[RMDB]
Description:
The record gives the reactivity of an RNA of 207 nucleotides to 2A3. The reactions ran in a buffer of 150 mM KOAc, 10 mM MgCl2 and 150 mM bicine (pH 8.5), at 24 C. For 2A3, 385 sequencing reads were counted. 2A3 is a SHAPE reagent: it acylates the 2'-hydroxyl of flexible nucleotides of all four kinds. For 2A3 the reverse transcriptase was SuperScript II with manganese. The data come from the RNA Mapping Database (RMDB), library ARCHII.
RNA sequence: GGGAACGACUCGAGUAGAGUCGAAAAGGGUUCGAACCCUACGGCCAGACGCGGAGGCACGCCUUUAAUUAUUACACCGUUUCGGUGGGGGCAAAGGAGCAAGCUGGGCUCGCCCAGCCUGUUCCUGCACCGUGACUUCCCGUGAACUGCAGUCGUCCACCCCUGGAGUGUUCGCACUCCAGGGGUGAAAAGAAACAACAACAACAAC
Reactivity to 2A3 in 0.01 (KOAc 150mM, MgCl2 10mM, bicine 150mM(pH8.5), 24C), signal-to-noise 1, nucleotides 027 to 156: g080g000g010u140u300c030g120a280a300c000c000c000u000a000c000g050g000c050c040a030g040a090c000g000c040g000g000a060g040g030c000a020c040g070c000c030u060u020u070a150a110u060u110a150u140u030a040c000a000c000c000g120u160u290u300c190g070g010u000g000g000g000g000g020c040a110a170a000g000g000a000g000c010a000a000g000c000u000g000g000g020c110u080c270g250c000c000c000a000g070c000c000u000g000u040u010c000c000u000g000c000a000c020c020g040u000g040a170c000u000u090c110c040c030g020u000g000a180a040c000u000g000c050a030g050u000c040g000u000c010